[RMDB]
RNA sequence: GGGAACGACUCGAGUAGAGUCGAAAAUUGGGUGCUCUAGUUGAGUCUAGUUUCAAUCAAUUUGUUACCAUGGUUGCUUAUGGAGAUGACAAUUUGAUAUCAGUAGCAGCCCCGGCUCGUUCUUGGUUCAAUGGAGCUUCCUUGCAGCAGACUAUGCCAUUACUGUUGCGUUCGCGCAACAGUAAUGAAAAGAAACAACAACAACAAC
Reactivity to DMS in 0.01 (KOAc 150mM, MgCl2 10mM, bicine 150mM(pH8.5), 24C), signal-to-noise 2, nucleotides 027 to 156: u010u000g060g060g030u000g010c030u020c020u000a000g010u000u010g010a130g000u000c040u000a090g030u020u000u010c000a140a140u010c020a040a070u000u010u010g000u000u000a040c000c030a120u000g010g040u000u000g030c050u000u000a100u000g000g010a140g010a200u000g000a020c000a020a080u000u010u000g000a050u010a120u010c050a100g000u000a080g030c030a110g010c040c040c020c040g040g020c000u000c020g000u000u000c040u000u010g020g020u000u000c040a050a100u000g020g000a120g020c020u000u000c020c030u000u000g010c070a080g010c040a080g020a060c060u000a090u000g000c090
Reactivity to 2A3 in 0.01 (KOAc 150mM, MgCl2 10mM, bicine 150mM(pH8.5), 24C), signal-to-noise 4, nucleotides 027 to 156: u130u070g070g010g000u110g000c010u000c010u030a180g250u040u020g010a010g000u000c030u040a020g010u030u050u130c060a030a020u030c010a020a050u050u010u110g030u030u040a050c020c010a000u040g070g080u120u170g120c090u190u130a040u060g020g020a150g050a170u130g040a030c030a080a100u070u020u080g050a040u050a050u100c070a030g070u140a010g020c030a020g040c010c010c000c050g090g000c000u040c060g040u070u010c030u060u060g000g010u030u020c020a000a030u100g020g000a010g030c060u090u110c010c010u020u070g060c040a010g020c010a020g010a180c090u200a140u150g030c020